Overview
Conditions: 150 mM KOAc, 10 mM MgCl2 and 150 mM bicine (pH 8.5), 24 C. An RNA of 177 nucleotides, treated with DMS and 2A3 and read out base by base. For DMS the reverse transcriptase was MarathonRT.
[RMDB]
RNA sequence: GGGAACGACUCGAGUAGAGUCGAAAAGCAGUACGGUUCGCCGUACUGCAAAGGCACAUGCAAAACCGCUGGGAAACCAUAAACGGAAAGCCAAGCAUGAAAAAACAGGGACCUUCGGGUCCCUGAACAACUAGAGCUAGUUCGCUAGCUCUAGUUGAAAAGAAACAACAACAACAAC
Reactivity to DMS in 0.01 (KOAc 150mM, MgCl2 10mM, bicine 150mM(pH8.5), 24C), signal-to-noise 3, nucleotides 027 to 126: g010c000a000g010u020a000c000g000g000u000u030c210g030c000c000g000u010a010c010u010g010c000a000a050a090g000g020c060a160c020a020u010g000c030a060a050a110a110c030c020g000c060u000g020g010g000a090a090a160c010c010a070u010a090a100a130c040g000g010a080a040a060g020c020c030a030a220g000c000a000u010g000a000a070a100a080a110a080c010a000g020g010g000a020c000c000u010u000c140g010g040g020u000c000c000c000u000g000a000a060
Reactivity to 2A3 in 0.01 (KOAc 150mM, MgCl2 10mM, bicine 150mM(pH8.5), 24C), signal-to-noise 3, nucleotides 027 to 126: g000c000a010g000u000a000c000g020g040u020u100c190g030c080c000g010u000a000c000u000g000c010a010a000a020g040g000c040a040c000a150u040g010c000a000a000a000a180c000c020g000c040u020g000g000g050a040a020a030c000c000a040u110a080a190a020c030g000g030a130a020a000g040c010c050a070a020g000c010a030u050g070a140a080a010a020a000a000c000a010g000g000g010a000c010c010u050u100c210g130g000g000u000c000c010c000u000g010a000a000